This 177-nucleotide RNA was probed chemically with DMS and 2A3. The 2A3 profile rests on 513 reads. For DMS the reverse transcriptase was MarathonRT. Conditions: 150 mM KOAc, 10 mM MgCl2 and 150 mM bicine (pH 8.5), 24 C.
RNA sequence: GGGAACGACUCGAGUAGAGUCGAAAAGCGAUGAGGCUUGUGAAGCGUAGACAGCGGGUACAAAAGCCGCGUAAUUGAGCCACGAAAUAGGUAAACAUUGUAAGAGGCUUUCACCGUUUGGUGCGUGGAGAAUCUGUGUGUUCGCACACAGAUUCUCAAAAGAAACAACAACAACAAC
Reactivity to DMS in 0.01 (KOAc 150mM, MgCl2 10mM, bicine 150mM(pH8.5), 24C), signal-to-noise 2, nucleotides 027 to 126: g030c040g020a140u060g030a150g000g000c030u000u000g000u030g010a150a170g010c070g000u040a080g000a150c010a070g000c020g000g000g000u010a100c290a060a030a020a050g010c040c000g000c000g020u000a020a100u000u000g020a190g000c050c000a150c220g020a010a100a120u080a040g000g010u040a060a110a140c170a030u000u010g000u000a060a260g020a060g010g010c020u000u000u010c120a100c020c010g000u010u000u010g000g000u000g000c050g070u010g000
Reactivity to 2A3 in 0.01 (KOAc 150mM, MgCl2 10mM, bicine 150mM(pH8.5), 24C), signal-to-noise 1, nucleotides 027 to 126: g020c010g030a050u150g080a120g030g030c040u010u000g130u030g070a050a060g000c050g000u050a000g040a090c000a000g000c000g030g000g020u050a140c030a000a090a000a000g000c000c000g010c030g070u020a000a000u030u210g050a010g000c000c000a050c060g110a000a210a000u080a080g080g000u010a000a000a100c040a020u030u230g010u100a010a100g000a030g000g010c000u110u000u040c030a140c060c050g100u090u020u090g120g000u000g040c050g020u090g000